RNA sequence: GGGAACGACUCGAGUAGAGUCGAAAAGCACAAUUCUUCGGAAUUGUGCAAAUAAAAGCGUGCGCGGACUCUACCGCAAAUGAGCACGCUGAGAACAUAAAAAAACCGGACGCUUCGGCGUCCGGAACCAUGUAGAAUUGUUCGCAAUUCUACAUGGAAAAGAAACAACAACAACAAC
Reactivity to 2A3 in 0.01 (KOAc 150mM, MgCl2 10mM, bicine 150mM(pH8.5), 24C), signal-to-noise 2, nucleotides 027 to 126: g000c000a010c000a000a010u000u020c020u050u070c190g060g000a020a020u000u010g000u020g000c000a000a010a030u030a000a040a010a010g010c000g010u010g000c060g010c020g040g070a110c060u100c120u300a160c080c010g000c080a090a090a110u270g020a030g000c000a000c010g020c010u000g000a050g020a050a050c060a090u270a040a280a030a020a000a000a040c010c010g000g020a000c000g030c020u100u150c300g090g000c000g000u000c010c000g010g000a000a000
Reactivity to DMS in 0.01 (KOAc 150mM, MgCl2 10mM, bicine 150mM(pH8.5), 24C), signal-to-noise 2, nucleotides 027 to 126: g000c000a010c000a030a010u000u000c000u010u020c160g010g000a010a000u000u000g020u010g020c000a040a020a070u000a070a130a170a030g000c000g030u000g000c000g000c000g030g010a130c190u010c280u010a080c000c000g010c020a040a060a100u000g010a280g010c000a010c010g000c010u000g000a050g000a190a130c090a100u040a010a000a100a100a030a130a040c000c000g010g000a010c000g040c000u000u000c300g010g040c000g010u000c000c010g000g000a040a040
The record gives the reactivity of an RNA of 177 nucleotides to 2A3 and DMS. For DMS the reverse transcriptase was MarathonRT. The RNA was probed in 150 mM KOAc, 10 mM MgCl2 and 150 mM bicine (pH 8.5) at 24 C. DMS (dimethyl sulfate) methylates the pairing face of unpaired adenines and cytosines. For 2A3, 2,150 sequencing reads were counted. For DMS, 1,401 sequencing reads were counted.